Structure probing data (DMS and 2A3) for a 177-nucleotide construct. The reactions ran in a buffer of 150 mM KOAc, 10 mM MgCl2 and 150 mM bicine (pH 8.5), at 24 C. It was measured as part of the RMDB library M2PK50. DMS adducts were read by reverse transcription with MarathonRT. 2A3 adducts were read by reverse transcription with SuperScript II with manganese.
RNA sequence: GGGAACGACUCGAGUAGAGUCGAAAAUCUAACUCAUUCGUGAGUUAGAGUGAGCGCAGCCACCAUUGGGCCGGUGGCGCGCUGUCGGUGCCGCGCGUGGCGAUAGUGCUUGCUUCGGCAAGCACAAUCAAUGGGAACACUUCGGUGUUCCCAUUGAAAAAGAAACAACAACAACAAC
Reactivity to DMS in 0.01 (KOAc 150mM, MgCl2 10mM, bicine 150mM(pH8.5), 24C), signal-to-noise 4, nucleotides 027 to 126: u000c000u000a010a000c000u000c000a060u000u010c200g020u000g000a020g010u000u000a000g000a030g000u010g000a050g010c010g000c010a140g030c000c010a010c000c000a120u020u010g000g000g010c300c230g000g000u000g010g010c000g000c010g010c000u000g010u000c030g000g020u010g010c020c020g000c150g020c100g020u000g010g020c050g020a090u000a070g020u000g010c000u000u000g010c010u000u010c220g010g000c000a010a010g010c000a000c000a050a090
Reactivity to 2A3 in 0.01 (KOAc 150mM, MgCl2 10mM, bicine 150mM(pH8.5), 24C), signal-to-noise 2, nucleotides 027 to 126: u000c000u000a020a000c000u000c000a020u080u060c190g130u020g050a010g000u000u000a010g000a010g030u130g130a030g010c020g000c080a110g010c020c020a000c010c010a040u030u080g050g060g010c050c050g000g020u010g000g000c000g000c000g000c010u000g100u040c050g050g070u080g020c010c000g030c030g040c050g120u100g020g030c030g000a070u110a100g020u000g000c000u010u010g010c000u050u030c200g070g000c010a010a000g010c010a000c000a000a020